RNA sequence: GGGAACGACUCGAGUAGAGUCGAAAAUAAUCAAGAUGAAUCGUUUUUAGUUUGCUUGCUUACCUUAGGGGCCAGCAUGAGAUCUACUUGAAUCUUUUUAUGUAGGCAGAUAGCGACGGAAUUUAAAACUCCUAGUACUGUUCGCAGUACUAGGAGUAAAAGAAACAACAACAACAAC
Reactivity to 2A3 in 0.01 (KOAc 150mM, MgCl2 10mM, bicine 150mM(pH8.5), 24C), signal-to-noise 4, nucleotides 027 to 126: u240a010a130u090c070a040a040g020a130u160g100a060a160u070c040g040u000u000u050u000u140a150g040u060u070u050g020c000u000u000g010c020u050u160a190c020c000u040u090a120g000g000g030g000c030c010a000g000c010a020u060g030a040g000a050u010c010u040a060c010u070u040g040a060a040u050c030u000u100u020u010u030a100u080g050u010a040g050g000c000a010g040a120u090a050g040c000g010a020c050g050g060a060a050u060u070u130a090a090a020
Reactivity to DMS in 0.01 (KOAc 150mM, MgCl2 10mM, bicine 150mM(pH8.5), 24C), signal-to-noise 3, nucleotides 027 to 126: u030a050a070u000c070a110a080g000a100u070g010a070a090u010c060g000u010u040u040u020u000a080g030u020u010u020g000c050u000u000g000c030u000u000a080c060c070u030u030a130g020g010g000g000c100c090a040g020c040a070u020g000a050g000a030u010c030u000a090c070u010u000g010a060a030u020c030u000u000u010u000u050a050u020g000u000a050g000g010c040a050g020a050u010a020g030c030g000a030c050g010g010a040a050u010u010u000a070a070a060